The record gives the reactivity of an RNA of 177 nucleotides to DMS and 2A3. DMS adducts were read by reverse transcription with MarathonRT. Reactivities are given for positions 27 through 126. As a SHAPE reagent, 2A3 marks flexible, mostly unpaired nucleotides at the ribose 2'-OH.

[RMDB]
RNA sequence: GGGAACGACUCGAGUAGAGUCGAAAAAGGGUCGUGAGGCAACUCGUCAGAGAAGACGUUAAAACUAAAUCGAAGUAAAUGCUAACGACGAAAAGUUUGCAUUGGCCGCCUAACAGCCGCCUUGGGUUGUUUAUCAAGGGUUCGCCCUUGAUAAACAAAAAGAAACAACAACAACAAC
Reactivity to DMS in 0.01 (KOAc 150mM, MgCl2 10mM, bicine 150mM(pH8.5), 24C), signal-to-noise 3, nucleotides 027 to 126: a050g000g000g010u000c050g000u000g000a050g010g010c020a180a080c160u070c000g020u000c020a010g000a280g000a130a050g010a000c000g000u020u040a000a000a010a010c030u010a060a090a060u010c190g020a100a160g020u050a020a000a010u010g010c000u000a010a020c000g030a300c180g020a070a110a050a120g010u010u010u000g000c000a010u000u000g010g030c130c100g010c000c010u030a060a030c060a060g000c010c010g010c000c030u000u020g000g000g010u030
Reactivity to 2A3 in 0.01 (KOAc 150mM, MgCl2 10mM, bicine 150mM(pH8.5), 24C), signal-to-noise 3, nucleotides 027 to 126: a010g030g010g000u050c030g030u060g040a050g020g080c020a010a030c040u020c020g010u020c030a000g040a020g020a300a020g000a000c080g020u040u030a030a030a000a000c010u050a060a030a090u140c090g030a070a010g070u100a120a120a000u000g000c000u020a000a000c020g130a020c060g050a040a070a020a060g010u020u040u040g020c020a040u030u040g050g040c050c050g010c010c000u030a050a020c000a020g000c010c010g010c010c020u030u020g100g000g000u070